[RMDB]
RNA sequence: GGGAACGACUCGAGUAGAGUCGAAAAGAACUGGCAUCGGACCCUGGGAAACAGGCAUCUAGCGUAUUAAUAGGUCGCUAGAAGACGGGCAGGCUUCACCACUAGGUAACCUGCCGCCGAGAGGGAAAUACGGAAUAGUCUUCGGACUAUUCCGUAUAAAAGAAACAACAACAACAAC
Reactivity to 2A3 in 0.01 (KOAc 150mM, MgCl2 10mM, bicine 150mM(pH8.5), 24C), signal-to-noise 5, nucleotides 027 to 126: g050a040a060c010u020g070g000c030a080u020c030g070g000a070c020c000c000u020g000g000g110a130a200a050c010a010g030g010c000a020u000c010u000a000g000c010g030u130a040u110u200a230a190u110a170g190g040u060c000g000c000u000a000g000a040a000g050a030c090g010g040g000c000a000g000g050c070u150u120c050a030c010c010a120c150u110a110g000g000u010a010a010c000c000u000g010c010c020g000c000c000g030a020g020a010g000g060g020a030a200
Reactivity to DMS in 0.01 (KOAc 150mM, MgCl2 10mM, bicine 150mM(pH8.5), 24C), signal-to-noise 6, nucleotides 027 to 126: g000a110a110c040u010g010g000c090a110u020c010g000g020a090c070c000c000u000g000g020g020a100a070a120c080a060g010g010c050a240u010c000u000a000g010c030g020u020a170u000u020a100a130u050a150g000g010u010c000g030c010u010a000g000a020a060g000a250c170g000g000g000c030a030g000g000c160u000u030c190a020c000c010a130c300u040a120g010g020u000a130a120c000c000u010g010c000c020g000c040c010g000a040g000a140g000g000g000a050a090